[RMDB]
RNA sequence: GGGAACGACUCGAGUAGAGUCGAAAACUCACUGGUCAAGUGAUCCUGCGCCGACAAUGUAGCGGGGCUCAAGUACACCGCCGAAGCCGCGGCAUUCACAUAACACCCAUGCGGGUCUACGGGCCUGUGACCUGCUUGUCUUCGGACAAGCAGGUCAAAAAGAAACAACAACAACAAC
Reactivity to 2A3 in 0.01 (KOAc 150mM, MgCl2 10mM, bicine 150mM(pH8.5), 24C), signal-to-noise 2, nucleotides 027 to 126: c040u050c000a000c000u070g030g020u170c080a130a130g010u040g040a080u100c000c040u030g020c000g040c020c020g100a050c070a050a200u120g020u070a110g020c000g000g000g000g000c000u040c080a090a000g030u000a020c060a040c010c010g000c000c000g080a040a000g000c040c000g010c000g000g000c030a040u080u080c040a010c020a090u120a060a060c020a060c050c000c000a000u240g000c030g000g020g010u000c010u060a140c150g040g040g000c000c000u020g000